[RMDB]
Structure probing data (2A3 and DMS) for a 177-nucleotide construct. Reactivities are given for positions 27 through 126. For DMS, 1,607 sequencing reads were counted. For 2A3 the reverse transcriptase was SuperScript II with manganese.
RNA sequence: GGGAACGACUCGAGUAGAGUCGAAAAGCGAGGCGUAUAGGCCACCCAGUCCACCACUACAUCGAAGGAAUAGGGCCGGAGGAGAUCCCGUAUCGAAUCCUUGUCCGUGAUGUCCCCAAGGAGUACGCUGCUAUAUCUCCUUCGGGAGAUAUAGCAGAAAAGAAACAACAACAACAAC
Reactivity to 2A3 in 0.01 (KOAc 150mM, MgCl2 10mM, bicine 150mM(pH8.5), 24C), signal-to-noise 2, nucleotides 027 to 126: g070c020g060a040g090g000c050g000u110a070u090a220g070g030c000c020a060c040c020c020a000g100u080c030c010a040c080c070a090c050u120a040c020a060u040c040g100a160a060g100g050a110a130u100a110g040g000g000c040c010g000g000a010g080g030a070g000a030u010c000c060c080g040u180a040u040c000g000a010a010u020c020c020u040u150g010u030c030c000g000u080g040a060u070g030u050c020c000c010c000a020a040g080g010a030g030u010a010c060g000
Reactivity to DMS in 0.01 (KOAc 150mM, MgCl2 10mM, bicine 150mM(pH8.5), 24C), signal-to-noise 3, nucleotides 027 to 126: g000c040g020a110g020g000c040g020u000a100u010a140g020g020c030c020a150c030c020c020a130g000u000c030c020a060c050c000a080c110u000a050c090a030u020c030g000a180a140g020g000a050a080u020a080g010g000g030c040c300g000g000a050g020g010a300g030a040u010c020c070c140g010u000a060u010c020g000a300a240u010c010c000u000u010g000u000c000c030g000u020g010a080u000g010u000c000c000c010c050a110a060g000g000a060g010u020a080c160g000